[RMDB]
RNA sequence: GGGAACGACUCGAGUAGAGUCGAAAACUUUGCUGUUUGAGGUUUUGGUCCUUUAGGACAGGGGACUGCCUUCCUGGAAAGUGGUCUCCGGUUGUUCCUCGUUCCUGGAAGAUGGCGGGAGGAACAACGGUACAAUAGCUUUCGAGCUAUUGUACCGAAAAGAAACAACAACAACAAC
Reactivity to DMS in 0.01 (KOAc 150mM, MgCl2 10mM, bicine 150mM(pH8.5), 24C), signal-to-noise 2, nucleotides 027 to 126: c020u010u000u000g000c060u000g000u000u010u030g010a070g000g000u000u000u000u000g010g010u000c000c010u010u020u030a110g030g010a040c060a080g020g000g000g020a010c000u000g000c000c040u000u010c020c160u000g030g000a010a020a050g030u000g000g010u000c000u000c000c000g000g030u000u010g000u000u000c000c000u010c010g010u000u010c000c000u000g010g050a230a100g000a160u020g000g020c060g000g000g000a010g000g000a020a010c010a000a020
Reactivity to 2A3 in 0.01 (KOAc 150mM, MgCl2 10mM, bicine 150mM(pH8.5), 24C), signal-to-noise 2, nucleotides 027 to 126: c000u040u040u090g040c050u050g050u200u100u160g050a040g040g000u060u040u140u100g050g010u020c010c000u130u190u130a120g000g060a040c050a040g000g000g000g010a010c020u040g000c000c000u040u020c040c080u100g030g090a050a000a020g030u060g000g000u050c010u000c000c020g020g000u010u010g000u020u000c000c010u010c050g300u040u020c000c010u000g050g040a090a040g060a110u190g000g040c010g000g040g000a010g000g010a000a000c010a000a020